[RMDB]
RNA sequence: GGGAACGACUCGAGUAGAGUCGAAAAGAGAGAAAUACCGCGCGGAAGCAGAGAAAGGACUGUAAGGACGCGAAAUCCUUUACGUCAUUUACCGCAAGAAAGAGCGAUGUGUGACGAAUAGAGAGAGAUGGAGCUAAAUCUUCGGAUUUAGCUCCAUAAAAGAAACAACAACAACAAC
Reactivity to 2A3 in 0.01 (KOAc 150mM, MgCl2 10mM, bicine 150mM(pH8.5), 24C), signal-to-noise 3, nucleotides 027 to 126: g100a020g020a010g050a000a070a080u120a110c050c030g070c030g000c020g030g050a110a060g040c030a050g050a010g160a130a070a010g070g000a010c010u030g000u020a040a100g130g030a000c010g000c010g080a100a000a000u010c000c000u000u000u020a010c020g000u020c000a000u060u040u090a040c000c010g030c050a020a000g130a090a100a000g090a020g000c000g020a050u020g060u000g000u000g080a010c030g030a040a040u060a040g120a020g000a000g010a020g000
Reactivity to DMS in 0.01 (KOAc 150mM, MgCl2 10mM, bicine 150mM(pH8.5), 24C), signal-to-noise 2, nucleotides 027 to 126: g000a080g000a060g030a070a040a010u010a070c090c100g010c080g020c030g010g030a160a160g000c040a020g020a150g000a090a050a150g000g000a020c000u020g000u000a040a060g010g010a100c000g030c120g000a020a070a180u010c010c040u010u000u000a030c040g010u030c000a030u000u000u000a030c030c050g070c010a090a030g020a130a030a070g000a160g000c000g000a050u030g000u000g000u000g010a060c030g000a060a050u020a030g000a190g000a030g020a080g000